[RMDB]
The data come from the RNA Mapping Database (RMDB), library OK1LIB. The record gives the reactivity of an RNA of 177 nucleotides to 2A3 and DMS. 2A3 adducts were read by reverse transcription with SuperScript II with manganese. The RNA was probed in 150 mM KOAc, 10 mM MgCl2 and 150 mM bicine (pH 8.5) at 24 C. The DMS profile rests on 21,178 reads.
RNA sequence: GGGAACGACUCGAGUAGAGUCGAAAAGCGGCUGCACAUUCAUGGCGCGAAGGAUCAGGUCAGGUUCCUUCGUCACGUCGGCGUUCACGGCGCCGAAGCGGUGGCGGCCCAAGAGAUGCUGCGUCAGCUGUCAGAGAAAGUUCGCUUUCUCUGACAGAAAAGAAACAACAACAACAAC
Reactivity to 2A3 in 0.01 (KOAc 150mM, MgCl2 10mM, bicine 150mM(pH8.5), 24C), signal-to-noise 9, nucleotides 027 to 126: g050c050g030g000c030u060g020c030a040c020a170u110u140c050a060u160g070g000c050g000c000g040a020a010g010g000a010u030c050a040g060g280u100c040a040g100g080u050u050c010c000u000u020c000g020u020c020a020c090g060u020c000g000g010c010g020u120u140c120a060c130g090g000c000g000c000c000g020a030a030g150c090g080g010u030g020g000c000g010g000c000c010c000a060a010g070a010g000a040u080g020c020u020g010c020g030u020c010a030g000
Reactivity to DMS in 0.01 (KOAc 150mM, MgCl2 10mM, bicine 150mM(pH8.5), 24C), signal-to-noise 6, nucleotides 027 to 126: g020c100g010g000c000u010g000c030a090c060a050u020u030c060a120u020g010g020c140g020c010g010a030a010g000g000a020u000c030a100g010g010u030c150a100g010g010u010u010c000c000u000u000c000g000u000c040a050c110g010u000c000g000g000c020g010u010u010c240a100c240g010g010c010g010c000c010g010a020a030g020c100g000g020u000g000g000c040g000g000c010c030c030a080a060g010a070g000a070u020g000c030u010g000c090g000u010c070a120g010